[RMDB]
RNA sequence: GGGAACGACUCGAGUAGAGUCGAAAAGUUGACACACUGCCAGGGCAUCGGUAGAGUACGCAGCCAGAACGACGGGAGAUUGCAACCUUCCAAGCGCGGCACAAGCCAUAGGCGCAAGGGACACGGCGAUAGGGACUCGUUUCGACGAGUCCCUAUCAAAAGAAACAACAACAACAAC
Reactivity to DMS in 0.01 (KOAc 150mM, MgCl2 10mM, bicine 150mM(pH8.5), 24C), signal-to-noise 1, nucleotides 027 to 126: g020u000u010g070a120c020a070c020a040c130u000g020c000c020a150g000g030g000c090a070u000c030g000g000u000a020g000a070g050u000a110c260g020c090a070g010c020c010a010g020a060a030c110g020a120c150g030g000g000a020g000a090u000u000g000c120a130a020c100c040u000u000c050c070a090a250g000c060g000c060g050g000c000a030c220a180a060g000c050c020a160u010a130g010g000c020g000c020a040a100g000g000g020a060c080a130c120g010g030c190
Structure probing data (DMS) for a 177-nucleotide construct. It was measured as part of the RMDB library OK2TRN. The RNA was probed in 150 mM KOAc, 10 mM MgCl2 and 150 mM bicine (pH 8.5) at 24 C. DMS adducts were read by reverse transcription with MarathonRT. For DMS, 599 sequencing reads were counted.